An RNA of 177 nucleotides, treated with DMS and 2A3 and read out base by base. 2A3 adducts were read by reverse transcription with SuperScript II with manganese. The reactions ran in a buffer of 150 mM KOAc, 10 mM MgCl2 and 150 mM bicine (pH 8.5), at 24 C. For DMS, 1,687 sequencing reads were counted.
RNA sequence: GGGAACGACUCGAGUAGAGUCGAAAAGGCGUAGCGUUCGCGCUACGCCAAAUGAGCAUGUAGAAAUGGCCAAAGUACAUGCGAAAUAAAAGAGGCCAUAAAAAACCACUUAGUUCGCUAAGUGGAACAUGAUAGGACUGUUCGCAGUCCUAUCAUGAAAAGAAACAACAACAACAAC
Reactivity to DMS in 0.01 (KOAc 150mM, MgCl2 10mM, bicine 150mM(pH8.5), 24C), signal-to-noise 2, nucleotides 027 to 126: g000g000c000g020u010a000g010c000g050u000u000c230g020c000g020c000u000a000c000g040c000c010a010a000a020u000g000a290g010c000a000u000g000u000a010g000a070a040a030u000g000g010c010c010a150a080a100g000u000a020c000a000u000g010c000g010a040a140a100u000a030a020a170a140g010a220g020g030c000c000a080u040a010a030a080a080a020a080c000c000a000c010u000u000a010g010u000u000c190g020c000u000a010a000g000u000g000g000a030a050
Reactivity to 2A3 in 0.01 (KOAc 150mM, MgCl2 10mM, bicine 150mM(pH8.5), 24C), signal-to-noise 3, nucleotides 027 to 126: g010g020c010g000u000a010g010c020g000u030u030c220g000c010g000c070u000a000c000g000c000c000a000a000a000u010g000a020g000c000a000u010g010u010a040g080a200a210a040u030g010g000c000c000a100a050a000g060u000a010c000a000u020g000c010g040a120a140a090u210a020a080a020a020g120a070g020g000c020c010a000u100a010a090a000a000a000a010c000c010a000c010u010u010a000g020u040u030c180g020c160u000a010a000g000u000g000g010a000a010